This 207-nucleotide RNA was probed chemically with DMS and 2A3.
RNA sequence: GGGAACGACUCGAGUAGAGUCGAAAAGAACACGUCUCGGGACGACGCGAAACUCGCCCUGGUCGGGAUGGGUUUAACGACCCCUCGGGUUUCCUAGUUCCUAAAACUAGGUGGUGGAGUCAUAUAAAAAACUUCUACACGUUCGCGUGUAGAAGAAGACAUACUAACCGUUCGCGGUUAGUAUGUCAAAAGAAACAACAACAACAAC
Reactivity to DMS in 0.01 (KOAc 150mM, MgCl2 10mM, bicine 150mM(pH8.5), 24C), signal-to-noise 1, nucleotides 027 to 156: g020a090a080c040a110c010g000u010c000u020c010g010g000g040a050c110g060a030c050g000c010g000a220a080a160c200u000c000g030c010c000c030u020g010g000u000c130g040g000g000a060u010g010g030g040u000u000u000a110a140c040g000a110c010c000c000c000u000c070g040g020g010u000u000u000c030c020u010a030g000u010u000c000c060u010a070a010a040a040c040u000a080g000g030u010g030g050u000g030g000a140g030u020c040a100u000a140u030a010a070a050a020a070a170c000u010u000c000u000a000c000a010c010g010u000u010c300g030c020g030u000g000u010a000g010a000a020g010a030a090
Reactivity to 2A3 in 0.01 (KOAc 150mM, MgCl2 10mM, bicine 150mM(pH8.5), 24C), signal-to-noise 2, nucleotides 027 to 156: g050a060a010c030a010c090g030u020c000u030c030g040g030g030a100c270g010a060c050g060c100g060a070a050a030c000u030c030g040c020c000c000u070g010g080u070c030g010g010g010a050u110g010g020g000u010u030u030a090a040c030g020a030c010c050c000c000u010c010g020g000g000u020u010u040c000c010u010a000g000u000u000c010c030u060a050a030a000a020c020u010a040g040g000u020g010g050u070g060g060a000g050u080c080a050u210a010u300a170a070a020a000a030a070c010u000u000c000u000a000c010a000c000g010u030u030c210g000c020g090u000g000u000a010g000a000a000g000a000a010

Source information: For DMS the reverse transcriptase was MarathonRT.